The data come from the RNA Mapping Database (RMDB), library TTRDEL. An RNA of 177 nucleotides, treated with DMS and 2A3 and read out base by base. The DMS profile rests on 12,453 reads. For 2A3 the reverse transcriptase was SuperScript II with manganese. Conditions: 150 mM KOAc, 10 mM MgCl2 and 150 mM bicine (pH 8.5), 24 C. Values are in units of 0.01, from 0 to 300, in steps of 10.

RNA sequence: GGGAACGACUCGAGUAGAGUCGAAAAGAUAUGGAGGGAGCGUGGCAACUUUCUAUUUCGGAAACGAAAUACUAAGUUGGCCACGCGAAGAACUCCUAAGUCAAACCAGCCAGUUCGCUGGCUGGAAGAACUUAAGUUAGUUCGCUAACUUAAGUUCAAAAGAAACAACAACAACAAC
Reactivity to DMS in 0.01 (KOAc 150mM, MgCl2 10mM, bicine 150mM(pH8.5), 24C), signal-to-noise 6, nucleotides 027 to 126: g000a040u000a300u010g000g000a010g000g010g000a080g020c000g030u000g010g000c010a010a020c000u000u000u000c070u000a010u000u000u000c000g000g000a110a110a220c000g000a010a010a000u000a000c040u000a000a010g010u000u000g010g010c000c000a010c000g010c000g010a020a090g000a150a180c000u000c000c000u010a040a110g010u010c030a110a130a200c010c000a000g010c000c010a020g000u000u010c210g010c000u000g000g000c000u010g000g000a020a060
Reactivity to 2A3 in 0.01 (KOAc 150mM, MgCl2 10mM, bicine 150mM(pH8.5), 24C), signal-to-noise 4, nucleotides 027 to 126: g010a020u070a040u140g000g000a010g010g000g020a050g010c000g000u000g000g010c000a010a000c000u020u010u000c020u010a010u010u010u000c000g030g010a060a060a060c010g010a000a010a000u010a010c020u010a010a010g010u010u040g140g050c020c020a000c000g000c020g000a000a010g000a010a010c000u000c000c000u020a130a000g060u030c060a020a040a150c000c000a010g010c010c000a010g020u120u150c290g080c130u000g000g000c020u000g010g000a000a040